[RMDB]
RNA sequence: GGGAACGACUCGAGUAGAGUCGAAAAACCUGAUGAUUCGUCAUCAGGUCACAUGCCGCCCCAACGGCUUCCUGACCGGGCGGAUUCACUUUAAAUGGAGCACUGCUGCAUCAUUCGUGAUGCAGAAGAUACCCAAGGGAUUCGUCCCUUGGGUAUCAAAAGAAACAACAACAACAAC
Reactivity to DMS in 0.01 (KOAc 150mM, MgCl2 10mM, bicine 150mM(pH8.5), 24C), signal-to-noise 4, nucleotides 027 to 126: a010c000c000u000g000a000u000g010a030u010u010c210g030u000c000a010u000c010a020g010g010u010c070a040c160a090u010g020c010c000g000c010c020c030c080a060a250c090g010g000c020u000u010c010c020u000g020a090c230c260g000g010g010c030g010g000a090u000u000c070a060c120u000u000u000a050a070a090u000g000g000a050g000c080a140c220u000g000c000u010g000c000a020u000c000a050u000u030c190g020u000g000a010u000g000c000a020g000a030a050
Reactivity to 2A3 in 0.01 (KOAc 150mM, MgCl2 10mM, bicine 150mM(pH8.5), 24C), signal-to-noise 5, nucleotides 027 to 126: a010c000c000u010g000a000u000g000a000u000u100c180g070u010c080a000u000c010a000g000g010u000c010a070c010a040u140g020c000c010g000c000c000c010c000a080a040c050g080g010c000u110u070c010c010u030g030a050c010c020g010g000g000c010g000g040a020u130u130c060a070c110u150u210u250a080a160a120u190g030g000a020g020c030a020c100u130g010c020u000g000c020a010u000c000a010u000u110c140g100u040g000a010u000g000c000a000g010a000a010
Chemical mapping of a 177-nucleotide RNA with DMS and 2A3.
For DMS the reverse transcriptase was MarathonRT.
The RNA was probed in 150 mM KOAc, 10 mM MgCl2 and 150 mM bicine (pH 8.5) at 24 C.
The 2A3 profile rests on 8,203 reads.
2A3 adducts were read by reverse transcription with SuperScript II with manganese.